Conditions: 150 mM KOAc, 10 mM MgCl2 and 150 mM bicine (pH 8.5), 24 C. Structure probing data (DMS and 2A3) for a 177-nucleotide construct. It was measured as part of the RMDB library TTRDES. The 2A3 profile rests on 12,738 reads. For DMS the reverse transcriptase was MarathonRT.
[RMDB]
RNA sequence: GGGAACGACUCGAGUAGAGUCGAAAAGAUAUGGAGAUAUGCAGCUUUUGACGAAUCGGUAUCGGAAACGAUACACGAUUCGAUAAGCUGGUAUCUCCUAAGUCAAACGUCAGCUUCGGCUGACGAACGUUAGUAGUCACUUCGGUGACUACUAACGAAAAGAAACAACAACAACAAC
Reactivity to DMS in 0.01 (KOAc 150mM, MgCl2 10mM, bicine 150mM(pH8.5), 24C), signal-to-noise 4, nucleotides 027 to 126: g000a030u000a300u010g000g010a020g010a010u000a000u000g020c010a000g030c000u000u000u000u020g020a290c130g010a010a010u000c000g000g010u010a010u010c000g010g010a120a110a190c000g010a020u000a000c000a140c000g010a010u000u000c010g000a050u000a010a010g020c000u000g000g010u000a000u000c000u000c010c000u000a000a050g010u000c040a060a140a290c010g010u000c000a010g020c010u000u000c290g030g010c010u000g010a000c000g010a020a070
Reactivity to 2A3 in 0.01 (KOAc 150mM, MgCl2 10mM, bicine 150mM(pH8.5), 24C), signal-to-noise 6, nucleotides 027 to 126: g040a010u050a020u140g030g020a010g010a000u090a040u260g300c000a010g010c030u130u160u300u300g300a190c050g000a000a000u020c010g000g010u000a000u020c000g020g020a080a040a000c020g000a000u010a010c080a020c090g000a000u000u000c000g000a010u010a010a010g000c000u000g000g000u000a000u000c000u000c000c010u000a030a010g010u000c030a080a040a100c030g010u000c010a000g010c000u110u140c290g220g000c010u020g010a000c010g000a070a000
2A3 adducts were read by reverse transcription with SuperScript II with manganese.